[RMDB]
RNA sequence: GGGAACGACUCGAGUAGAGUCGAAAACAAUAUGCAUGGAUCCCAUGUACAAUAUUCAUGCGUAUUAGUAUGCUCGUAGAAAGAAUUGCACUCAUGAAAAUGAGUGUAGUACAUGGGACGAGCAUAAGGUAGACGUAGAUUUCGAUCUGCGUCUACCAAAAGAAACAACAACAACAAC
Reactivity to 2A3 in 0.01 (KOAc 150mM, MgCl2 10mM, bicine 150mM(pH8.5), 24C), signal-to-noise 9, nucleotides 027 to 126: c020a000a050u020a010u050g000c020a020u100g020g030a060u020c000c010c010a010u040g050u060a050c070a120a100u030a030u090u030c010a020u030g010c010g010u020a060u070u070a100g140u030a020u070g030c010u010c040g030u030a020g100a080a150a010g050a040a030u050u020g000c000a000c000u000c000a000u020g080a050a060a030a010u010g000a010g000u000g000u000a010g000u010a010c010a010u020g010g000g010a000c000g000a000g000c010a000u010a040a030
Reactivity to DMS in 0.01 (KOAc 150mM, MgCl2 10mM, bicine 150mM(pH8.5), 24C), signal-to-noise 7, nucleotides 027 to 126: c040a080a060u000a010u000g010c000a010u000g010g000a040u000c020c010c010a020u000g000u020a120c140a070a060u010a010u000u000c010a030u000g000c010g030u000a020u010u020a060g030u020a010u010g010c010u000c030g030u020a050g010a080a120a140g000a050a030u010u000g010c010a000c000u000c000a000u000g000a090a050a150a000u000g000a010g010u000g010u000a010g010u000a020c020a030u000g000g000g000a010c000g000a010g000c000a010u000a030a090
An RNA of 177 nucleotides, treated with 2A3 and DMS and read out base by base. 2A3 adducts were read by reverse transcription with SuperScript II with manganese. For DMS, 36,965 sequencing reads were counted. The reactions ran in a buffer of 150 mM KOAc, 10 mM MgCl2 and 150 mM bicine (pH 8.5), at 24 C. Values cover nucleotides 27 to 126.